[RMDB]
RNA sequence: GGGAACGACUCGAGUAGAGUCGAAAAAGCUAUCUUUAAAGGUACCCUGUACAGCUCUUGCCCUGUACAGCUAGCUACAGAGAUUCAAUCCUUUCUGUUCGAUUAGGACACAUCUCAGUGGCAGAUAACAUGCAAAGUUAUUAUAUGUAUGAACCAAGCACGCGUAUUAUUUCGAUAAUACGCGUGCAAAAGAAACAACAACAACAAC
Reactivity to 2A3 in 0.01 (KOAc 150mM, MgCl2 10mM, bicine 150mM(pH8.5), 24C), signal-to-noise 1, nucleotides 027 to 156: a000g040c020u030a040u080c030u000u130u050a240a250a020g050g000u030a050c020c000c010u010g020u000a000c000a030g000c010u110c090u230u250g030c060c000c020u000g010u000a000c010a020g000c020u040a040g020c000u000a000c040a020g020a000g000a000u030u150c070a030a120u070c060c000u000u020u000c000u000g300u200u170c050g050a090u060u240a090g000g010a030c050a000c010a060u020c000u000c020a010g000u010g000g000c000a000g000a020u170a010a050c000a020u130g030c050a060a100a100g040u070u050a010u050u190a160u110a050u130g070u000a050u030g080a000a020c110c020a040a010
This 207-nucleotide RNA was probed chemically with 2A3. It was measured as part of the RMDB library OK3TST. Conditions: 150 mM KOAc, 10 mM MgCl2 and 150 mM bicine (pH 8.5), 24 C. For 2A3 the reverse transcriptase was SuperScript II with manganese.